[RMDB]
RNA sequence: GGGAACGACUCGAGUAGAGUCGAAAAUAUCUCCUUCGGGAGAUACGAUUGUAUGCACGCAUGACUAAGUCGCUUUGGAUAAAAGCGUCUGCUAAAUGGCAUUUUUAAGUCUCGAGUUCGCUCGAGAGUUUGCUUGUUGAUUCGUCAACAAGCAAACAAAAGAAACAACAACAACAAC
Reactivity to DMS in 0.01 (KOAc 150mM, MgCl2 10mM, bicine 150mM(pH8.5), 24C), signal-to-noise 2, nucleotides 027 to 126: u000a000u000c000u000c000c000u000u020c250g030g010g010a010g000a000u000a000c100g010a180u000u020g000u000a030u010g020c020a130c090g020c040a100u010g000a110c150u000a150a050g000u000c010g010c000u000u000u000g010g010a250u010a090a000a010a020g000c000g010u000c030u010g020c080u010a040a100a070u010g000g000c010a040u010u000u010u020u040a050a170g020u000c000u000c000g000a010g000u010u020c230g000c000u000c000g000a020g000a020
Reactivity to 2A3 in 0.01 (KOAc 150mM, MgCl2 10mM, bicine 150mM(pH8.5), 24C), signal-to-noise 2, nucleotides 027 to 126: u030a000u000c000u000c000c000u030u050c190g080g010g010a030g010a000u010a010c000g020a010u130u230g090u180a040u080g000c030a010c090g080c020a050u100g060a170c060u140a050a050g030u050c010g000c000u030u050u040g140g110a220u300a280a070a000a000g010c010g000u010c060u060g000c000u060a120a160a070u150g040g000c010a050u020u020u000u050u300a110a080g030u000c010u000c010g020a020g040u000u090c130g020c050u010c010g040a020g010a000